An RNA of 177 nucleotides, treated with DMS and 2A3 and read out base by base. Source: RMDB library OK2TST, as collected in RNAgym. DMS adducts were read by reverse transcription with MarathonRT. The reactions ran in a buffer of 150 mM KOAc, 10 mM MgCl2 and 150 mM bicine (pH 8.5), at 24 C. Values cover nucleotides 27 to 126.
[RMDB]
RNA sequence: GGGAACGACUCGAGUAGAGUCGAAAAUGCCGCCAUGUGACGCAGCGACUAUCCAACAGCGGGUGCGUGACGCCGGUGUGGUCGGAGCCGGUGGCGCCGGGUUCCCCACGGCGGUGAAGUUACAGGCCGUGUACCAACCUUUCGAGGUUGGUACACGAAAAGAAACAACAACAACAAC
Reactivity to DMS in 0.01 (KOAc 150mM, MgCl2 10mM, bicine 150mM(pH8.5), 24C), signal-to-noise 2, nucleotides 027 to 126: u010g020c050c060g020c020c010a100u000g020u020g030a050c030g010c070a100g010c030g000a080c090u010a090u010c050c060a120a100c210a110g020c070g010g000g020u010g000c040g010u020g010a150c080g010c020c020g010g000u000g020u000g010g020u000c100g000g000a100g000c020c000g010g020u000g020g000c180g020c010c020g000g000g000u000u010c010c020c020c060a040c020g010g000c010g000g000u000g000a060a100g000u000u010a020c050a060g020g000c050
Reactivity to 2A3 in 0.01 (KOAc 150mM, MgCl2 10mM, bicine 150mM(pH8.5), 24C), signal-to-noise 1, nucleotides 027 to 126: u090g050c000c000g000c030c030a200u070g020u030g020a020c050g000c050a040g040c000g080a120c040u160a070u080c030c030a090a080c040a170g110c030g000g000g070u030g010c000g020u050g050a040c040g000c000c010g300g260u050g000u020g010g010u040c060g030g020a030g050c000c020g000g090u080g150g000c050g020c030c010g160g010g000u080u010c030c000c000c000a010c000g050g000c000g010g020u030g050a070a020g060u030u040a010c020a030g050g000c040